[RMDB]
RNA sequence: GGGAACGACUCGAGUAGAGUCGAAAAAGACAUACGUUCGCGUAUGUCUGACGGGCAGCUGACCCUAAGGAAAUGCUCUAUGACAGGACACACUGAUUGUGAUACCUCGAGAUUUCGAUCUCGAGAACUCAAAUAUUCCUUUCGAGGAAUAUUUGAGAAAAGAAACAACAACAACAAC
Reactivity to DMS in 0.01 (KOAc 150mM, MgCl2 10mM, bicine 150mM(pH8.5), 24C), signal-to-noise 9, nucleotides 027 to 126: a010g000a010c000a000u000a000c000g020u000u020c190g030c010g020u000a000u000g010u000c000u000g010a100c150g010g010g010c040a070g000c080u000g000a160c020c010c020u010a080a100g000g010a060a080a080u000g010c040u000c030u000a080u000g000a160c100a050g000g010a090c050a040c040a040c060u000g000a120u010u000g000u000g000a160u010a100c160c000u000c000g010a010g010a020u000u000u010c150g010a020u000c000u000c000g000a010g000a060a110
Reactivity to 2A3 in 0.01 (KOAc 150mM, MgCl2 10mM, bicine 150mM(pH8.5), 24C), signal-to-noise 8, nucleotides 027 to 126: a000g000a000c000a000u010a000c000g010u020u080c250g000c000g120u000a000u000g000u000c000u000g010a010c010g010g000g010c020a080g020c070u100g070a150c010c000c020u040a080a040g070g020a060a080a060u090g010c010u000c030u070a130u120g100a050c040a040g050g010a030c010a000c000a010c060u070g100a280u150u070g050u020g060a070u100a140c010c010u000c010g000a010g000a010u060u090u150c190g050a010u000c000u010c000g010a000g010a000a000
This 177-nucleotide RNA was probed chemically with DMS and 2A3. Values cover nucleotides 27 to 126. The reactions ran in a buffer of 150 mM KOAc, 10 mM MgCl2 and 150 mM bicine (pH 8.5), at 24 C. For 2A3 the reverse transcriptase was SuperScript II with manganese.